Description:
An RNA of 207 nucleotides, treated with 2A3 and DMS and read out base by base. The DMS profile rests on 3,497 reads. Source: RMDB library OK3TST, as collected in RNAgym.
[RMDB]
RNA sequence: GGGAACGACUCGAGUAGAGUCGAAAAUAUCUGAACCAGAAGGUGUUGUCCCUCGUGAAUUAGGGGAUCGUGCCUUAUUCACAUUACUAUCAGACUUUUAUCUUUCUCCUUCAACAUCUAAUACGUCUGAUACUACUAAUAACAAUUCUGAAAGUAAAUUAUACGUGGAGUUCGCUCCACGUAUAAUAAAAGAAACAACAACAACAAC
Reactivity to 2A3 in 0.01 (KOAc 150mM, MgCl2 10mM, bicine 150mM(pH8.5), 24C), signal-to-noise 5, nucleotides 027 to 156: u140a030u020c050u080g040a040a050c050c010a050g040a090a000g010g020u040g020u030u050g070u050c010c010c010u050c060g010u030g020a020a060u090u050a090g000g020g020g050a080u140c110g120u130g030c000c000u000u000a010u030u020c010a000c000a010u050u270a080c040u020a010u020c000a000g030a050c010u090u130u130u110a130u110c050u030u220u030c080u070c030c010u110u100c080a100a100c010a140u070c010u160a100a050u130a130c090g010u000c020u000g030a020u020a010c010u020a000c000u040a030a170u160a220a030c040a100a090u250u090c050u080g060a090a080a050g100u160a060a200
Reactivity to DMS in 0.01 (KOAc 150mM, MgCl2 10mM, bicine 150mM(pH8.5), 24C), signal-to-noise 2, nucleotides 027 to 156: u000a060u010c050u000g000a120a190c060c030a120g040a100a130g040g030u000g030u000u000g010u000c010c030c020u000c070g030u000g020a050a100u010u000a040g000g020g010g020a110u010c240g000u010g030c000c000u020u000a030u010u000c020a030c020a220u000u000a110c090u000a040u000c000a020g020a040c040u000u010u000u000a080u020c060u000u010u000c060u000c040c070u000u020c050a060a100c050a020u000c030u000a070a080u000a040c080g000u000c000u010g010a070u000a040c080u000a180c100u000a070a110u000a110a150c040a070a080u000u000c040u000g000a040a100a190g010u000a060a070
Reactivities are given for positions 27 through 156.